[RMDB]
RNA sequence: GGGAACGACUCGAGUAGAGUCGAAAAGUAAAGAAGAAAAGGUGCGCAAGAAAAGAAUGGUGGUAUAAACUGCCGAGAAUAACUAAUGGACGGCAGAGCGCACGAACCACCAAAGAACAGAAAAAAACAAUAAUACAUCGUUCGCGAUGUAUUAUUGAAAAGAAACAACAACAACAAC
Reactivity to 2A3 in 0.01 (KOAc 150mM, MgCl2 10mM, bicine 150mM(pH8.5), 24C), signal-to-noise 4, nucleotides 027 to 126: g020u090a040a070a090g070a060a050g050a000a230a000a000g020g010u020g000c010g000c010a040a060g050a210a190a000a000g020a020a010u030g000g000u010g000g000u010a010u050a060a070a000c010u000g000c000c000g040a060g040a060a100u180a090a000c100u110a130a030u140g080g070a010c010g000g000c000a000g010a010g000c020g000c000a000c010g010a020a020c000c000a000c000c000a050a050a010g050a070a020c080a040g190a020a170a010a000a000a000a000
Reactivity to DMS in 0.01 (KOAc 150mM, MgCl2 10mM, bicine 150mM(pH8.5), 24C), signal-to-noise 3, nucleotides 027 to 126: g010u020a060a050a130g020a080a110g010a090a070a080a080g010g000u000g020c020g060c020a040a120g000a040a010a020a050g000a050a030u010g020g000u000g010g030u000a300u000a040a040a030c000u000g000c000c000g020a100g020a100a050u000a080a110c130u010a050a080u000g000g010a140c020g000g000c000a010g010a050g000c010g010c000a010c020g000a040a080c000c000a010c000c020a040a050a070g000a020a050c160a080g020a010a000a030a040a040a060a140
Conditions: 150 mM KOAc, 10 mM MgCl2 and 150 mM bicine (pH 8.5), 24 C.
Chemical mapping of a 177-nucleotide RNA with 2A3 and DMS.
It was measured as part of the RMDB library M2PK90.
For 2A3, 5,416 sequencing reads were counted.